[RMDB]
RNA sequence: GGGAACGACUCGAGUAGAGUCGAAAAGCGAAAUACGAUGAGGAAGAUUUGAACAUCAUGAAAAUGAUGGUCAACGACAUCGCACAUCCUCUUUUGGAUUACAACGGUGUUUUGUUGAUGGCGUUCAACAUGAACACGUCCGGAAAUAACAUAACUGUCUAUCCAAUCAUUUCGAUGAUUGGAUAGAAAAAGAAACAACAACAACAAC
Reactivity to 2A3 in 0.01 (KOAc 150mM, MgCl2 10mM, bicine 150mM(pH8.5), 24C), signal-to-noise 7, nucleotides 027 to 156: g060c020g050a050a050a030u220a080c070g030a050u080g020a050g090g040a070a090g040a190u030u040u070g010a010a010c000a000u000c000a010u030g050a030a050a060a010u010g000a000u010g000g000u010c010a010a020c030g060a030c000a040u040c040g020c020a040c020a040u020c000c000u060c000u060u080u090u090g070g020a060u070u100a100c070a190a030c090g050g000u020g000u010u050u050u050g000u000u010g010a020u030g120g050c090g020u030u020c020a050a060c020a090u190g040a020a010c030a000c050g030u000c020c020g020g070a050a090a030u160a080a030c060a050u100a130a030c040u080g030
Reactivity to DMS in 0.01 (KOAc 150mM, MgCl2 10mM, bicine 150mM(pH8.5), 24C), signal-to-noise 4, nucleotides 027 to 156: g020c090g020a100a120a130u000a040c040g010a060u000g020a130g060g010a120a140g020a260u010u010u000g000a030a020c010a040u000c010a020u010g000a140a080a160a050u010g010a010u000g000g000u000c000a010a040c080g020a120c020a030u000c020g000c030a160c200a150u010c010c000u000c300u000u010u000u010g030g010a080u000u000a140c070a090a070c020g010g000u000g040u010u010u000u000g010u010u000g010a060u000g020g000c130g030u000u000c040a060a070c050a100u010g020a030a040c020a020c040g000u000c010c030g000g000a060a060a080u000a070a050c090a100u000a050a110c070u000g000